[RMDB]
RNA sequence: GGGAACGACUCGAGUAGAGUCGAAAAGAUAUGGAGCUCCCAGACAGUGGAACUACAAGAAUACUCGGAAACGAGUAUCCUUGCCAUCGAGAGCUCCUAAGUCAAACUAGGUUCUUCGGAACCUAGACGACAUAUACCACUUCGGUGGUAUAUGUCGAAAAGAAACAACAACAACAAC
Reactivity to 2A3 in 0.01 (KOAc 150mM, MgCl2 10mM, bicine 150mM(pH8.5), 24C), signal-to-noise 2, nucleotides 027 to 126: g030a010u070a050u120g040g000a010g000c030u000c050c100c060a040g090a160c120a030g120u100g070g050a220a140c140u120a050c300a010a000g030a010a000u010a000c010u000c010g010g000a050a050a040c010g050a020g000u010a000u000c000c000u010u030g120c030c020a090u150c070g100a080g000a000g190c020u000c000c000u020a060a010g020u050c070a090a090a160c000u000a010g000g020u000u000c000u010u090c300g100g010a010a010c000c000u000a000g030a040
Reactivity to DMS in 0.01 (KOAc 150mM, MgCl2 10mM, bicine 150mM(pH8.5), 24C), signal-to-noise 2, nucleotides 027 to 126: g010a040u000a300u000g020g000a080g040c010u010c000c010c020a210g070a070c220a130g070u010g000g010a070a140c030u040a300c010a000a010g030a000a010u000a000c000u030c000g000g000a010a080a180c000g010a040g010u000a000u000c010c000u000u010g020c020c090a110u020c000g000a090g000a040g000c000u010c000c000u020a020a060g000u000c040a090a080a300c010u000a000g010g010u000u000c000u010u020c150g030g000a040a000c000c000u000a000g000a180